[RMDB]
RNA sequence: GGGAACGACUCGAGUAGAGUCGAAAAGGAUCACGAGGGGGAGACCCCGGCAACCUGGGAUGGACACCCAAGGUGCUCACACCGGAGACGGUGGAUCCGGCCCGAGAGGGCAACGAAGGUCCCAACAAUGCGUACGUACUUUCGAGUACGUACGCAUAAAAGAAACAACAACAACAAC
Reactivity to DMS in 0.01 (KOAc 150mM, MgCl2 10mM, bicine 150mM(pH8.5), 24C), signal-to-noise 1, nucleotides 027 to 126: g020g000a000u000c000a130c300g020a130g050g000g000g030g000a120g010a240c030c000c000c000g000g000c020a010a030c000c040u000g030g000g000a070u030g000g030a150c150a170c030c010c000a000a020g000g000u030g000c020u010c050a300c010a000c040c000g000g000a280g000a150c020g000g010u020g000g000a020u000c000c020g000g000c000c000c040g000a110g000a090g000g000g060c020a060a060c080g000a160a190g000g000u000c000c000c070a240a030c160a050